The record gives the reactivity of an RNA of 177 nucleotides to DMS and 2A3. DMS (dimethyl sulfate) methylates the pairing face of unpaired adenines and cytosines. The reactions ran in a buffer of 150 mM KOAc, 10 mM MgCl2 and 150 mM bicine (pH 8.5), at 24 C. For 2A3 the reverse transcriptase was SuperScript II with manganese.
RNA sequence: GGGAACGACUCGAGUAGAGUCGAAAAGAUAUGGACAAUACAGCUUUUGACGCUCGUUUAUCGGAAACGAUAGGACGAGCGAUAAGCUGUUUGUCCUAAGUCAAACUGGCGACUUCGGUCGCCAGAAGACAUACGCAGUCUUCGGACUGCGUAUGUCAAAAGAAACAACAACAACAAC
Reactivity to DMS in 0.01 (KOAc 150mM, MgCl2 10mM, bicine 150mM(pH8.5), 24C), signal-to-noise 1, nucleotides 027 to 126: g000a030u000a210u030g000g000a030c000a010a000u010a010c030a030g010c000u000u000u020u000g030a240c110g010c000u020c000g020u000u000u000a000u000c000g020g000a120a040a100c010g000a000u000a000g010g030a010c010g020a000g050c000g010a000u000a000a010g030c000u000g000u000u000u000g000u000c000c010u000a010a090g010u020c000a090a170a300c020u000g020g000c000g000a020c000u030u010c260g030g000u000c000g000c000c000a000g000a050a060
Reactivity to 2A3 in 0.01 (KOAc 150mM, MgCl2 10mM, bicine 150mM(pH8.5), 24C), signal-to-noise 2, nucleotides 027 to 126: g030a000u040a060u070g000g010a000c000a000a040u190a300c010a020g010c000u260u190u260u300g300a250c170g000c010u000c010g000u000u000u000a010u000c030g030g000a000a050a030c000g010a000u010a030g190g110a020c020g020a010g050c000g000a000u000a000a010g000c030u000g010u000u000u000g000u000c010c000u000a020a000g020u010c010a100a040a140c000u000g010g000c000g010a020c010u010u070c300g070g000u010c000g000c000c000a020g000a000a020